Chemical mapping of a 207-nucleotide RNA with 2A3 and DMS. The data come from the RNA Mapping Database (RMDB), library M2RFPK. The RNA was probed in 150 mM KOAc, 10 mM MgCl2 and 150 mM bicine (pH 8.5) at 24 C. The DMS profile rests on 1,713 reads.
RNA sequence: GGGAACGACUCGAGUAGAGUCGAAAAACUGACGGUACGCCGUCAGAACGGUAGAAAAGAUGGUUUGAAAAUCACGCCUUCUACCAAUAUAGUAAAUAAAUAGGCGGAGCGGUCAUACGUGACCGCAAAAACAUAUUCAGCUUCGGCUGAAUAUGAACGAAUAGUUAACCUUCGGGUUAACUAUUCGAAAAGAAACAACAACAACAAC
Reactivity to 2A3 in 0.01 (KOAc 150mM, MgCl2 10mM, bicine 150mM(pH8.5), 24C), signal-to-noise 3, nucleotides 027 to 156: a010c000u000g000a000c000g010g010u060a020c200g070c030c000g000u000c000a000g000a040a010c040g020g000u000a010g030a000a020a010a000g060a250u020g020g060u050u090u230g100a190a130a000a000u000c000a000c000g000c000c000u010u000c010u010a010c000c000a010a000u120a010u030a030g070u040a010a060a170u060a040a060a050u130a030g020g000c040g010g020a010g000c010g000g010u010c010a000u030a110c200g050u030g010a000c000c000g000c000a000a000a000a000a020c000a000u000a000u000u000c000a000g010c020u030u120c180g120g000c010u000g000a000a000u000a000u000g020a010a010
Reactivity to DMS in 0.01 (KOAc 150mM, MgCl2 10mM, bicine 150mM(pH8.5), 24C), signal-to-noise 1, nucleotides 027 to 156: a180c000u000g010a030c020g010g040u000a070c300g070c000c000g110u000c000a000g040a060a010c220g030g060u000a010g000a000a020a020a010g010a090u010g000g070u010u010u010g010a110a140a090a030u010c000a030c050g000c020c010u000u000c000u000a000c000c000a070a100u010a080u010a150g010u000a090a090a100u000a150a050a110u020a110g020g020c000g000g010a230g000c000g000g030u000c000a160u010a100c160g030u000g020a180c000c010g010c000a040a000a090a110a050c010a000u000a000u000u000c000a030g020c000u000u000c300g080g020c000u000g000a040a010u000a020u000g000a050a110